An RNA of 177 nucleotides, treated with 2A3 and DMS and read out base by base. Conditions: 150 mM KOAc, 10 mM MgCl2 and 150 mM bicine (pH 8.5), 24 C. 2A3 adducts were read by reverse transcription with SuperScript II with manganese. Reactivities are given for positions 27 through 126.

[RMDB]
RNA sequence: GGGAACGACUCGAGUAGAGUCGAAAAGACUAUUAUUGUCUGGUAUAGUGCAACAGCAGAACAAUUUGCUGAGGGCUAUUGAGGCGCAACAGCAUCUGUUGCAACUCACAGUCUGGGGCAUCAAGCACAACGCAGCUCCAUUCGUGGAGCUGCGUUGAAAAGAAACAACAACAACAAC
Reactivity to 2A3 in 0.01 (KOAc 150mM, MgCl2 10mM, bicine 150mM(pH8.5), 24C), signal-to-noise 1, nucleotides 027 to 126: g000a010c010u040a000u300u050a080u020u190g010u000c010u000g040g000u050a080u060a170g170u240g070c020a030a040c030a000g000c020a000g020a010a000c070a070a040u180u200u080g000c000u000g000a080g000g030g000c030u100a000u180u180g000a050g100g000c010g000c010a000a000c000a000g080c020a040u070c040u050g000u000u000g030c030a020a020c000u000c000a010c010a000g050u000c010u060g100g000g050g000c000a020u060c000a030a030g130c010a010
Reactivity to DMS in 0.01 (KOAc 150mM, MgCl2 10mM, bicine 150mM(pH8.5), 24C), signal-to-noise 2, nucleotides 027 to 126: g040a050c030u010a050u010u070a080u050u010g000u000c040u010g010g000u000a050u020a100g000u010g030c040a200a250c210a000g000c030a030g020a100a080c180a060a080u040u000u000g060c000u000g000a300g010g010g000c000u000a240u000u060g000a010g030g030c300g000c010a000a010c000a000g000c260a020u020c050u040g000u000u000g000c010a030a200c020u050c000a090c180a000g000u000c010u020g000g000g010g090c020a070u000c150a190a110g020c220a100